Chemical mapping of a 207-nucleotide RNA with DMS and 2A3. 2A3 adducts were read by reverse transcription with SuperScript II with manganese.
RNA sequence: GGGAACGACUCGAGUAGAGUCGAAAAGCAAAUUUCGAUUUGCGAUUCUUCCUAAGUCAGCUCGUUGAUCGGAACGGGUCGCAACAGCUAUCGGAAACGAUAGACAUGCGACCGUUCCGGGAGAGCUGAUAUGGACUAUUAAGUGAUUCGUCACUAAAUUUAUAGCCAGAUUCGUCUGGCUAUAAAUAAAAGAAACAACAACAACAAC
Reactivity to DMS in 0.01 (KOAc 150mM, MgCl2 10mM, bicine 150mM(pH8.5), 24C), signal-to-noise 3, nucleotides 027 to 156: g000c030a010a020a060u010u000u020c230g030a110u000u010u000g020c020g000a180u010u000c040u000u000c010c010u010a100a300g030u000c010a030g020c010u000c010g020u000u010g000a120u000c040g010g000a040a010c000g010g000g000u000c010g000c000a050a080c090a250g000c020u000a010u010c010g000g000a220a140a300c010g010a010u000a020g000a060c010a300u010g020c020g000a040c000c000g010u000u000c000c000g010g000g010a040g010a020g020c000u000g020a000u000a050u010g000g020a110c090u010a140u000u000a110a070g020u000g000a100u000u000c190g010u010c010a060c030u000a080a100
Reactivity to 2A3 in 0.01 (KOAc 150mM, MgCl2 10mM, bicine 150mM(pH8.5), 24C), signal-to-noise 6, nucleotides 027 to 156: g000c000a000a020a010u130u140u150c170g120a040u020u030u030g000c010g010a040u080u030c030u050u020c010c000u030a120a050g030u010c000a000g000c000u010c030g240u280u030g010a010u020c000g000g000a010a020c060g090g060g180u060c000g000c010a050a120c030a120g050c000u000a000u000c000g060g060a110a040a050c010g010a010u000a010g050a090c040a060u050g000c000g000a000c020c000g000u000u000c010c000g000g000g000a010g000a000g000c000u000g000a000u000a000u010g020g000a020c080u050a160u300u270a180a030g010u000g010a020u020u150c140g070u020c140a000c020u080a140a180